[RMDB]
RNA sequence: GGGAACGACUCGAGUAGAGUCGAAAAGGCACGCCGCUUUACCGUAGCGAGAAUCUGAGCGUCUAACCGGUCGAUCUCUUCGCGCAACUCCUCGAUGUCGGUCAGGAGCGGCGCUUCGACCACCUCAGUGCACGUACCUAUUCGUAGGUACGUGCACAAAAGAAACAACAACAACAAC
Reactivity to DMS in 0.01 (KOAc 150mM, MgCl2 10mM, bicine 150mM(pH8.5), 24C), signal-to-noise 3, nucleotides 027 to 126: g030g070c070a200c040g010c010c010g010c020u000u000u000a110c140c060g000u000a080g010c050g000a050g020a080a060u010c080u010g000a060g010c030g010u000c150u030a140a140c140c160g020g000u010c010g010a040u010c140u020c160u000u000c220g010c020g020c040a080a090c020u000c030c010u000c130g000a060u010g020u010c160g030g000u000c080a050g020g030a040g040c300g000g040c020g000c010u000u000c010g000a040c000c000a120c060c030u000c070a100
Reactivity to 2A3 in 0.01 (KOAc 150mM, MgCl2 10mM, bicine 150mM(pH8.5), 24C), signal-to-noise 2, nucleotides 027 to 126: g020g010c050a000c040g020c000c010g050c020u030u020u080a050c000c030g050u050a020g020c030g030a040g030a080a050u090c070u160g000a020g100c020g030u020c060u060a100a070c080c050g050g020u020c010g000a030u040c070u010c030u300u200c020g000c000g030c010a000a000c010u030c030c000u040c120g080a090u110g150u270c100g020g000u040c040a040g000g050a010g000c000g000g000c000g000c000u040u030c020g050a060c030c030a030c010c010u080c050a020

Overview:
This 177-nucleotide RNA was probed chemically with DMS and 2A3. The RNA was probed in 150 mM KOAc, 10 mM MgCl2 and 150 mM bicine (pH 8.5) at 24 C. The data come from the RNA Mapping Database (RMDB), library OK2TST. The DMS profile rests on 1,445 reads.